[RMDB]
Chemical mapping of a 177-nucleotide RNA with DMS. Values cover nucleotides 27 to 126. The reactions ran in a buffer of 150 mM KOAc, 10 mM MgCl2 and 150 mM bicine (pH 8.5), at 24 C.
RNA sequence: GGGAACGACUCGAGUAGAGUCGAAAAAAAAAUAAGCGAAGAUAGCUCAGUCGGUAGAGCAGCAGGACCGAAACCUGCGAGUAAAGGGAUCAAGACCCUGUUCGCGCAAAAACCGAAGUUUAAAAAAACAUAUUGAUAGCUUCGGCUAUCAAUAUGUAAAAGAAACAACAACAACAAC
Reactivity to DMS in 0.01 (KOAc 150mM, MgCl2 10mM, bicine 150mM(pH8.5), 24C), signal-to-noise 1, nucleotides 027 to 126: a000a060a010a030a170u020a040a140g010c100g020a040a020g010a300u000a110g010c020u000c010a000g000u000c030g000g010u000a060g010a050g010c010a170g000c020a010g000g000a060c040c200g060a080a140a030c000c010u000g000c030g000a060g010u000a010a070a020g000g000g000a040u020c190a100a270g000a060c010c000c000u000g010u000u000c060g000c060g000c260a040a090a010a070a030c020c040g010a020a070g000u010u010u000a000a000a020a020a160a000
DMS adducts were read by reverse transcription with MarathonRT.